[RMDB]
Conditions: 150 mM KOAc, 10 mM MgCl2 and 150 mM bicine (pH 8.5), 24 C. The record gives the reactivity of an RNA of 207 nucleotides to 2A3 and DMS. DMS adducts were read by reverse transcription with MarathonRT. Source: RMDB library OK3TST, as collected in RNAgym.
RNA sequence: GGGAACGACUCGAGUAGAGUCGAAAACUUGGGUGGAGACAUUUAGGAGUUACGUGAUCGUGGCGGUGGCACCGACGCCAGUCGGCCGGAUGUAACGGGGUGCCGAGAAUACGUGGGUAGGUCGUGGGGCCGACAUGUAUGCUCAGCUGACGGCGAGGGAAUAUUAGUGUUUCGAUAUUAGUAUUCCAAAAGAAACAACAACAACAAC
Reactivity to 2A3 in 0.01 (KOAc 150mM, MgCl2 10mM, bicine 150mM(pH8.5), 24C), signal-to-noise 1, nucleotides 027 to 156: c020u020u040g010g000g000u060g000g000a010g010a000c020a070u050u050u120a040g000g010a030g010u030u090a040c020g000u050g060a040u020c030g030u000g000g010c010g000g000u020g010g020c040a010c010c000g000a000c020g030c010c010a020g020u010c000g010g000c000c000g040g010a020u030g010u050a050a010c010g000g010g000g010u010g010c020c040g000a010g040a030a010u020a010c020g000u040g010g050g000u070a070g010g020u020c050g110u080g000g060g050g000c000c010g000a000c000a000u000g000u000a050u010g010c010u010c030a000g000c000u000g010a010c000g000g010c000g010a030g010
Reactivity to DMS in 0.01 (KOAc 150mM, MgCl2 10mM, bicine 150mM(pH8.5), 24C), signal-to-noise 3, nucleotides 027 to 156: c040u000u010g010g060g040u000g010g000a130g020a040c040a110u000u000u000a090g020g020a110g010u010u000a080c060g020u000g020a080u000c070g050u000g010g030c030g020g020u000g040g040c050a120c010c040g030a080c020g010c030c080a040g030u000c020g010g040c030c030g020g020a080u010g020u000a060a090c040g000g010g030g020u000g020c010c020g030a080g010a060a050u010a030c030g040u000g020g020g000u000a100g030g030u010c030g030u000g020g010g040g010c030c000g020a040c020a040u000g010u000a030u000g010c020u000c010a130g040c030u000g010a120c040g010g010c010g010a160g030